[RMDB]
RNA sequence: GGGAACGACUCGAGUAGAGUCGAAAAUAAGUCUCUUUGCUACUUUAAUGACUUUUUCUGGUAAUGUAGAUCUUGAUGCGUUAGCUAGUGAUAUUUUUGACACUCCUAGCGUACUUCAAGCUACUCUGAAAUCAACUUAGUUCGCUAAGUUGAUUUCAAAAGAAACAACAACAACAAC
Reactivity to DMS in 0.01 (KOAc 150mM, MgCl2 10mM, bicine 150mM(pH8.5), 24C), signal-to-noise 4, nucleotides 027 to 126: u010a060a070g000u000c010u010c110u000u010u010g000c070u000a060c080u000u010u000a110a090u000g010a060c030u000u000u000u010u000c030u010g010g020u000a110a060u010g000u000a000g000a170u020c010u000u000g010a010u020g010c010g010u010u000a020g010c160u000a030g040u000g020a130u000a050u000u020u000u010u020g000a150c040a010c020u000c300c000u000a000g000c010g000u000a010c160u000u000c040a010a020g010c030u000a010c010u010c140u010
Reactivity to 2A3 in 0.01 (KOAc 150mM, MgCl2 10mM, bicine 150mM(pH8.5), 24C), signal-to-noise 5, nucleotides 027 to 126: u110a010a010g020u010c000u000c000u110u090u090g050c030u060a130c020u140u150u210a150a100u150g040a050c010u060u080u030u050u010c030u060g120g030u160a110a100u180g000u000a020g000a050u050c000u000u010g000a010u000g010c000g010u000u000a000g010c080u020a000g010u010g030a080u030a140u210u140u080u120u170g040a020c000a000c000u010c000c000u000a000g010c000g000u010a050c010u020u020c000a000a000g000c000u000a010c030u000c030u020

Structure probing data (DMS and 2A3) for a 177-nucleotide construct. As a SHAPE reagent, 2A3 marks flexible, mostly unpaired nucleotides at the ribose 2'-OH. Reactivities are given for positions 27 through 126. It was measured as part of the RMDB library 15KREP. For 2A3, 6,205 sequencing reads were counted. The RNA was probed in 150 mM KOAc, 10 mM MgCl2 and 150 mM bicine (pH 8.5) at 24 C.